[RMDB]
RNA sequence: GGGAACGACUCGAGUAGAGUCGAAAAGGCACAACAAAUUUCAACAAGCGGUUCAUUACUUGUGGCAGCUAACACUGCAGGUGGUGUAGCAGCGAAACUUAUUUCACCACAAUCAAUUGCCAUUGCGCGCCUAAGUGCCGUUCGCGGCACUUAGGCGAAAAGAAACAACAACAACAAC
Reactivity to 2A3 in 0.01 (KOAc 150mM, MgCl2 10mM, bicine 150mM(pH8.5), 24C), signal-to-noise 2, nucleotides 027 to 126: g070g000c040a020c010a010a000c130a020a270a120u150u290u220c230a250a240c040a180a020g010c010g080g000u000u050c080a010u120u080a020c030u070u070g060u070g120g000c000a030g020c040u090a070a000c030a000c050u000g000c000a020g080g000u040g000g010u000g020u010a080g030c010a000g050c000g130a010a030a020c030u060u040a060u090u260u010c000a000c010c000a000c040a110a060u050c050a000a050u030u110g010c000c040a000u010u150g000c030g000
Source: RMDB library OK1LIB, as collected in RNAgym.
The record gives the reactivity of an RNA of 177 nucleotides to 2A3.
2A3 adducts were read by reverse transcription with SuperScript II with manganese.
The reactions ran in a buffer of 150 mM KOAc, 10 mM MgCl2 and 150 mM bicine (pH 8.5), at 24 C.